Description:
An RNA of 177 nucleotides, treated with 2A3 and read out base by base.
RNA sequence: GGGAACGACUCGAGUAGAGUCGAAAAGUAUGCCACCGACGCCCAAGCCCUGGAUGCGCGGCUGAACGCCUUGGUGGCCACGGUGUGUGCCGGUGAUCCGCGCAGCACAGAUCAGCGCCGCGCCGACGAGGGGAUCGCAGUUCGCUGCGAUCCCCUCAAAAGAAACAACAACAACAAC
Reactivity to 2A3 in 0.01 (KOAc 150mM, MgCl2 10mM, bicine 150mM(pH8.5), 24C), signal-to-noise 1, nucleotides 027 to 126: g030u030a030u230g010c010c030a000c020c000g000a030c030g060c000c010c010a000a000g000c000c000c000u100g240g130a250u180g030c080g020c050g020g000c000u020g000a030a030c000g000c030c010u000u080g010g000u130g040g000c010c010a030c020g000g000u000g000u000g000u080g090c140c020g080g010u130g050a060u090c000c000g050c060g010c020a010g000c080a070c030a080g040a070u000c000a010g100c050g000c000c000g000c000g070c000c000g050a080c020
The 2A3 profile rests on 601 reads. Reactivities are given for positions 27 through 126. The reactions ran in a buffer of 150 mM KOAc, 10 mM MgCl2 and 150 mM bicine (pH 8.5), at 24 C.